[RMDB]
RNA sequence: GGGAACGACUCGAGUAGAGUCGAAAACCACCGUUUGAGGAUCGAAGCACUAAAUUAAAUCAAACUAGCUUAAGUUUAGCGUGUCUGUCCGCAUGCUUAAGUGAAAUUAAAGACGAGACUAAACGUGUAGUACUGAAGGUAGAGUAAUUUCGGACGGGCUUGUUGGUAUGUUCGCAUACCAACAAGCAAAAGAAACAACAACAACAAC
Reactivity to 2A3 in 0.01 (KOAc 150mM, MgCl2 10mM, bicine 150mM(pH8.5), 24C), signal-to-noise 3, nucleotides 027 to 156: c000c000a010c010c030g010u010u000u060g020a040g030g060a080u120c100g070a100a030g070c050a020c130u170a140a100a180u210u080a050a030a020u060c020a020a010a030c010u030a010g000c000u000u000a010a000g020u100u040u140a050g000c000g000u020g010u000c010u040g010u010c020c000g000c040a100u020g000c000u000u010a000a000g000u010g020a010a000a010u160u100a040a060a000g040a000c090g130a010g000a050c040u100a050a090a030c060g030u060g030u080a080g020u030a060c030u050g070a130a040g050g030u100a020g000a030g130u050a100a190u040u070u060c030g020g000a020c020g000g060